[RMDB]
RNA sequence: GGGAACGACUCGAGUAGAGUCGAAAAGUUCGUCAUCUUCGUGUACUUCGUCGGCUUAGAACUAUAGUUCUCGUGCCGUUCGUCGGCUUCGUGUACUUCGUCAUGUUCGUGUACUUCGUCAUGUUCGCCUCCUUCCUGUCUUCGGACAGGAAGGAGGAAAAGAAACAACAACAACAAC
Reactivity to DMS in 0.01 (KOAc 150mM, MgCl2 10mM, bicine 150mM(pH8.5), 24C), signal-to-noise 1, nucleotides 027 to 126: g000u000u000c030g030u000c020a040u030c100u010u000c060g040u010g020u010a110c050u070u020c100g000u000c020g000g010c060u020u000a050g010a040a000c020u000a090u010a130g020u000u010c000u000c060g020u010g030c010c010g030u020u000c100g010u010c080g000g000c030u000u010c020g000u000g000u000a070c030u000u010c040g010u000c030a050u000g020u000u000c020g010u000g010u000a070c090u000u000c050g030u010c010a120u020g010u000u000c090g000
Reactivity to 2A3 in 0.01 (KOAc 150mM, MgCl2 10mM, bicine 150mM(pH8.5), 24C), signal-to-noise 1, nucleotides 027 to 126: g050u020u040c000g010u000c050a040u000c100u150u090c040g060u010g020u070a150c020u030u050c060g040u000c050g040g070c000u000u120a010g000a030a000c000u010a070u080a300g050u010u000c010u000c010g000u030g020c000c020g000u020u040c060g060u030c010g000g000c010u000u040c010g040u010g010u020a090c000u070u030c020g060u020c010a080u150g010u000u040c030g030u000g120u060a060c000u020u020c030g050u000c020a030u100g010u070u050c040g110